[RMDB]
About this RNA:
This 177-nucleotide RNA was probed chemically with DMS and 2A3. As a SHAPE reagent, 2A3 marks flexible, mostly unpaired nucleotides at the ribose 2'-OH. In probing experiments dimethyl sulfate is read out at A N1 and C N3, which are open when not base-paired. It was measured as part of the RMDB library 15KREP. The reactions ran in a buffer of 150 mM KOAc, 10 mM MgCl2 and 150 mM bicine (pH 8.5), at 24 C. The 2A3 profile rests on 1,150 reads.

RNA sequence: GGGAACGACUCGAGUAGAGUCGAAAAAUAUUGGUGUCUACAUUAGUAUGUCACUUGUAUUAGUCAUUGUAGUGAAGAGAUUGUACAACCCAUCACUUUCUAACUUUGCGUUAGCAUUGUGCAGUGGCACGUGACCAAUGUUCGCAUUGGUCACGUGAAAAGAAACAACAACAACAAC
Reactivity to DMS in 0.01 (KOAc 150mM, MgCl2 10mM, bicine 150mM(pH8.5), 24C), signal-to-noise 2, nucleotides 027 to 126: a010u010a010u000u010g010g010u010g000u000c000u010a030c020a240u010u000a100g040u020a010u020g020u000c010a000c000u000u000g010u000a020u030u000a100g000u000c030a050u000u000g010u000a040g010u000g010a040a080g010a120g000a090u010u020g010u000a090c130a080a110c070c010c020a100u000c020a030c040u000u000u010c060u010a070a040c000u000u000u000g020c140g030u000u000a050g010c050a030u000u010g000u000g010c200a050g030u000g000g010
Reactivity to 2A3 in 0.01 (KOAc 150mM, MgCl2 10mM, bicine 150mM(pH8.5), 24C), signal-to-noise 1, nucleotides 027 to 126: a000u050a020u010u030g010g000u050g000u000c030u030a020c010a060u100u100a070g010u030a030u240g010u010c000a000c000u000u000g000u050a030u060u040a010g020u000c060a050u030u080g060u030a030g010u050g070a060a020g030a040g020a040u070u070g000u080a060c010a080a030c030c000c000a040u040c000a000c000u030u060u000c040u030a080a070c010u050u120u140g090c050g060u050u100a030g000c040a030u010u000g000u030g050c030a010g060u020g040g040